[RMDB]
RNA sequence: GGGAACGACUCGAGUAGAGUCGAAAAAAUUGUAGUGGCGGUGAAGAUGCCGCCUACCCGCAGAAGGACGGAAAGACCCUAUAGACCUUAACUGUAAGCUGUCAUUGUUUCUUCGGUUUUAAUGCUCAGUUCAUCAGUUAUUCGUAACUGAUGAACUAAAAGAAACAACAACAACAAC
Reactivity to 2A3 in 0.01 (KOAc 150mM, MgCl2 10mM, bicine 150mM(pH8.5), 24C), signal-to-noise 5, nucleotides 027 to 126: a000a000u220u160g050u090a090g040u020g080g000c030g020g000u060g100a290a070g090a160u240g030c000c000g020c000c000u000a010c000c010c000g000c010a010g050a100a030g020g030a040c040g020g020a060a030a020g080a030c010c010c000u040a040u050a060g040a020c030c000u060u040a040a070c040u050g040u110a040a030g070c040u000g030u060c010a110u050u040g010u010u010u000c010u030u040c000g030g070u030u030u020u200a150a110u160g010c030u030c090
Reactivity to DMS in 0.01 (KOAc 150mM, MgCl2 10mM, bicine 150mM(pH8.5), 24C), signal-to-noise 4, nucleotides 027 to 126: a060a050u010u020g020u010a090g030u000g000g020c000g000g010u010g000a130a120g010a180u050g010c000c000g020c010c010u000a010c030c020c010g010c080a060g000a060a060g000g000a120c050g010g000a070a050a080g000a120c060c030c030u000a130u010a070g000a080c030c020u020u000a080a080c090u000g000u000a050a060g010c040u010g010u010c030a190u000u000g000u010u000u000c020u000u000c100g010g000u000u010u010u000a080a070u030g010c050u000c290